An RNA of 177 nucleotides, treated with DMS and 2A3 and read out base by base. Reactivities are given for positions 27 through 126. The RNA was probed in 150 mM KOAc, 10 mM MgCl2 and 150 mM bicine (pH 8.5) at 24 C.
RNA sequence: GGGAACGACUCGAGUAGAGUCGAAAAGACGCCUGUGUGGCGAAGCGAGCAUGAGAUGGAGCCGCAAGAGAAGAUGAGAUAGAAGCGGCAAGAUAGCUUGCUCGCCAAAAGAUCCAUCUCACAGAGACACCAUUACCAUAUUCGUAUGGUAAUGGUGAAAAGAAACAACAACAACAAC
Reactivity to DMS in 0.01 (KOAc 150mM, MgCl2 10mM, bicine 150mM(pH8.5), 24C), signal-to-noise 7, nucleotides 027 to 126: g000a130c130g020c010c000u000g010u030g010u020g010g030c010g010a120a140g010c010g000a020g010c020a080u020g000a050g000a020u000g000g010a300g000c010c000g010c010a110a120g010a120g010a090a120g010a150u020g000a170g010a150u010a120g000a170a120g000c000g000g000c020a010a090g000a070u010a050g000c010u010u000g000c000u000c010g020c000c070a020a060a070a070g010a130u000c020c020a040u020c010u000c030a090c240a090g000a080g030a260
Reactivity to 2A3 in 0.01 (KOAc 150mM, MgCl2 10mM, bicine 150mM(pH8.5), 24C), signal-to-noise 9, nucleotides 027 to 126: g090a010c050g060c020c010u130g040u080g090u140g100g000c000g020a040a000g000c000g000a000g000c040a060u110g020a020g010a090u030g020g030a010g000c000c000g010c050a070a030g100a010g070a240a050g090a120u300g080a060g050a110u180a070g090a180a020g030c000g000g000c010a010a010g040a040u120a010g040c000u000u000g000c000u010c000g000c000c000a000a050a000a020g060a020u000c000c000a030u000c010u010c010a090c010a040g090a010g010a050